[RMDB]
RNA sequence: GGGAACGACUCGAGUAGAGUCGAAAAGGAGGUUCCUGUGGUAAGGAACAAGGGCUCCUGGCAAUAGCCUCUGAGUGAGCCACCUUGAAAAUGGAUUGUCCAGCCCCAGUCAAGCUUUCAGAUGACUGUAGCUCCUGCCAAUGUCUUCACCACAACACAGGAGGUAAAUGUUCGCAUUUACCUCCUGAAAAGAAACAACAACAACAAC
Reactivity to 2A3 in 0.01 (KOAc 150mM, MgCl2 10mM, bicine 150mM(pH8.5), 24C), signal-to-noise 2, nucleotides 027 to 156: g020g000a070g090g000u020u010c010c040u050g020u040g070g040u070a040a010g000g000a090a000c030a000a010g010g000g000c000u020c020c020u000g020g020c050a160a300u050a180g030c050c010u100c270u270g090a080g070u270g020a000g010c010c020a050c010c000u010u020g080a030a050a040a070u080g030g030a070u040u210g050u070c030c020a040g050c050c000c000c010a010g020u020c000a180a000g040c090u120u180u230c060a070g010a200u040g010a020c010u000g020u010a000g010c000u030c020c020u010g030c000c020a050a020u100g040u000c010u060u030c050a050c050c040a010c000a150a040c110a020
This 207-nucleotide RNA was probed chemically with 2A3. For 2A3 the reverse transcriptase was SuperScript II with manganese. The reactions ran in a buffer of 150 mM KOAc, 10 mM MgCl2 and 150 mM bicine (pH 8.5), at 24 C. The data come from the RNA Mapping Database (RMDB), library OK3TST.